[RMDB]
RNA sequence: GGGAACGACUCGAGUAGAGUCGAAAAUUGUCUUCAUAGAACCAAGCUUUGGGGUAGGGAAACUUCAAUUCUGUAACUAUAAUAACAAUUCUGUAACUAUAAUAUUGGAAUUUCGGAGCAUCACUAAUAAGAAGCUUGUUGUUUUACAGAGUGGAAAGUCCCCAUAUUUAUUCGUAAAUAUGGGGACAAAAGAAACAACAACAACAAC
Reactivity to 2A3 in 0.01 (KOAc 150mM, MgCl2 10mM, bicine 150mM(pH8.5), 24C), signal-to-noise 1, nucleotides 027 to 156: u100u090g050u070c050u070u140c060a160u070a080g000a020a010c070c030a030a080g030c020u000u050u090g030g030g040g020u020a000g050g060g000a060a110a000c020u030u030c000a050a120u050u040c000u010g080u020a030a040c010u050a080u030a260a060u080a020a050c050a040a060u200u000c040u130g050u000a040a060c000u020a050u180a240a250u120a220u110u200g040g000a110a040u090u000u090c010g040g000a000g020c000a000u100c010a010c010u020a030a100u040a120a080g050a000a000g040c000u000u050g000u010u010g000u010u060u000u000a030c040a010g120a010g080u300g110g130a030a020a300
Conditions: 150 mM KOAc, 10 mM MgCl2 and 150 mM bicine (pH 8.5), 24 C. Chemical mapping of a 207-nucleotide RNA with 2A3.